[RMDB]
RNA sequence: GGGAACGACUCGAGUAGAGUCGAAAACUUGAUUCGGGAGAGACCCUUCUGUACCGCGAGGUACGUGAGGUGGCCCUGUUCGAUCCCUUCCACCACUUUGAUCCUGAGACCCAACUCCCGCUCCACCGGAUCGAGUAUUGUUCGCAAUACUCGAUCCAAAAGAAACAACAACAACAAC
Reactivity to 2A3 in 0.01 (KOAc 150mM, MgCl2 10mM, bicine 150mM(pH8.5), 24C), signal-to-noise 1, nucleotides 027 to 126: c020u030u090g030a010u140u030c010g000g000g010a110g000a030g040a070c000c000c000u070u000c020u050g000u000a000c000c000g000c020g060a070g010g010u010a010c010g040u100g000a040g060g010u070g020g000c030c020c000u010g050u040u070c070g040a140u060c000c020c000u040u040c030c020a060c000c020a020c060u030u070u130g030a030u070c000c010u060g030a060g130a150c050c000c000a030a030c020u000c020c010c020g000c010u050c030c020a040c080c030
Reactivity to DMS in 0.01 (KOAc 150mM, MgCl2 10mM, bicine 150mM(pH8.5), 24C), signal-to-noise 1, nucleotides 027 to 126: c080u000u020g000a070u000u000c040g020g010g000a130g000a160g000a140c030c020c020u000u020c040u000g010u000a010c000c010g000c300g000a180g030g010u000a010c000g000u000g030a020g010g010u000g040g010c050c010c010u000g020u000u010c010g000a060u000c020c030c000u000u000c030c000a070c030c060a030c090u000u010u010g010a070u000c000c010u010g000a140g010a070c060c020c010a070a120c110u000c030c020c030g030c060u000c010c020a090c220c120
This 177-nucleotide RNA was probed chemically with 2A3 and DMS. The 2A3 profile rests on 1,307 reads. It was measured as part of the RMDB library OK2TST. 2A3 adducts were read by reverse transcription with SuperScript II with manganese.